Description
Structure probing data (2A3 and DMS) for a 177-nucleotide construct. 2A3 adducts were read by reverse transcription with SuperScript II with manganese. For DMS, 8,749 sequencing reads were counted. For 2A3, 6,478 sequencing reads were counted. Conditions: 150 mM KOAc, 10 mM MgCl2 and 150 mM bicine (pH 8.5), 24 C. Values cover nucleotides 27 to 126. It was measured as part of the RMDB library OK2TST.

RNA sequence: GGGAACGACUCGAGUAGAGUCGAAAAAGCCGACGCUGACUGCCCCGCCCUGGGGAGCUCAUCCGGCCGAAAGUCUGAGCGGAGAGCGAAACCGCGACGCAGGACUGAGUCAGUCGGGAGAGAGCUGCGUAAAAACUAAAUUCGUUUAGUUUUUACGAAAAGAAACAACAACAACAAC
Reactivity to 2A3 in 0.01 (KOAc 150mM, MgCl2 10mM, bicine 150mM(pH8.5), 24C), signal-to-noise 3, nucleotides 027 to 126: a000g040c020c040g100a030c090g010c050u070g060a080c040u080g030c000c000c000c020g030c020c030c020u040g000g000g000g020a000g000c000u020c010a070u000c000c000g030g000c000c020g040a050a020a000g020u000c010u030g040a060g060c020g000g040a190g030a040g130c020g050a280a130a060c140c030g020c000g010a020c010g000c010a020g020g000a010c020u020g020a030g140u040c060a000g010u000c030g010g050g000a010g020a000g000a010g010c020u060g000
Reactivity to DMS in 0.01 (KOAc 150mM, MgCl2 10mM, bicine 150mM(pH8.5), 24C), signal-to-noise 7, nucleotides 027 to 126: a110g010c020c040g030a120c190g010c050u010g010a060c060u000g020c040c000c020c050g000c030c020c020u000g010g020g000g010a070g010c020u000c010a150u000c000c020g000g010c010c020g010a080a100a060g010u000c020u000g000a160g010c020g000g000a130g010a160g020c030g010a080a160a120c200c010g030c020g000a100c040g020c070a300g000g000a020c020u000g000a100g000u000c050a040g010u010c010g000g010g000a070g000a120g010a050g010c020u000g010